RNA sequence: GGGAACGACUCGAGUAGAGUCGAAAAAAGGACUGGUUCGCCAGUCCUUAUUCAUUCGUACGCAACGAAGCGUAAGUCAUUACGCAAAUGACUAAAAGCCUAUACGAAAGGACUUCGGUCCUUUCAAGAGACAGCACUAAUUCGUUAGUGCUGUCUCAAAAGAAACAACAACAACAAC
Reactivity to 2A3 in 0.01 (KOAc 150mM, MgCl2 10mM, bicine 150mM(pH8.5), 24C), signal-to-noise 2, nucleotides 027 to 126: a020a010g010g000a010c000u010g000g030u040u100c130g040c060c000a000g010u000c000c000u000u000a000u000u030c000a020u020u000c020g010u020a010c050g000c110a190a080c130g170a120a040g020c010g000u030a040a050g010u010c020a040u040u050a040c060g030c180a040a010a020u010g010a000c020u020a060a050a000a070g090c000c030u120a080u020a100c060g000a000a010a000g000g000a000c000u020u030c220g070g000u020c000c000u000u010u000c000a010a000
Reactivity to DMS in 0.01 (KOAc 150mM, MgCl2 10mM, bicine 150mM(pH8.5), 24C), signal-to-noise 2, nucleotides 027 to 126: a030a000g000g030a030c000u010g000g010u010u020c200g030c000c000a000g050u000c000c000u000u000a000u000u000c100a100u010u010c120g000u000a020c170g000c080a160a090c100g000a050a070g010c020g010u000a070a040g000u010c110a000u000u020a070c190g010c200a040a010a010u030g010a030c020u010a070a050a110a100g040c060c030u010a130u050a140c130g000a010a000a010g010g010a030c000u000u000c210g020g000u000c000c000u000u000u000c000a050a130